[RMDB]
RNA sequence: GGGAACGACUCGAGUAGAGUCGAAAAUAUUUGGUAACCUCGAUAACCUCGGUGUAUUAGCUCGCGACUUACAUAAAGACCAUGAUGUUAUCCAGGUCGAUUUGCGCGAUCACGGUUUAUCGCCGCGCAGUAUAGAAGGGUUCGCCCUUCUAUACUGAAAAGAAACAACAACAACAAC
Reactivity to DMS in 0.01 (KOAc 150mM, MgCl2 10mM, bicine 150mM(pH8.5), 24C), signal-to-noise 9, nucleotides 027 to 126: u010a080u000u010u000g020g010u010a080a060c030c020u000c290g000a050u000a040a050c030c050u000c040g010g020u000g010u000a050u010u000a070g010c060u010c110g010c060g010a240c080u000u000a070c090a070u000a050a070a150g010a100c050c040a090u000g000a050u000g010u000u000a040u000c040c100a080g010g010u000c040g010a160u010u000u000g020c060g020c050g000a060u000c090a100c070g000g000u000u010u000a070u010c080g010c090c030g020c130g010
Reactivity to 2A3 in 0.01 (KOAc 150mM, MgCl2 10mM, bicine 150mM(pH8.5), 24C), signal-to-noise 9, nucleotides 027 to 126: u070a010u040u090u080g070g010u060a030a040c000c010u010c020g020a040u010a040a020c010c010u030c040g030g010u040g010u050a150u120u110a040g030c030u030c060g050c020g100a130c040u060u070a020c050a090u180a080a140a020g060a030c010c020a070u150g010a030u060g060u180u060a030u030c030c040a020g010g020u020c010g040a040u050u060u160g030c040g000c010g000a010u050c050a030c100g040g030u070u110u090a060u080c010g000c030c000g010c010g000
Chemical mapping of a 177-nucleotide RNA with DMS and 2A3. 2A3 adducts were read by reverse transcription with SuperScript II with manganese. DMS adducts were read by reverse transcription with MarathonRT. It was measured as part of the RMDB library OK2TST.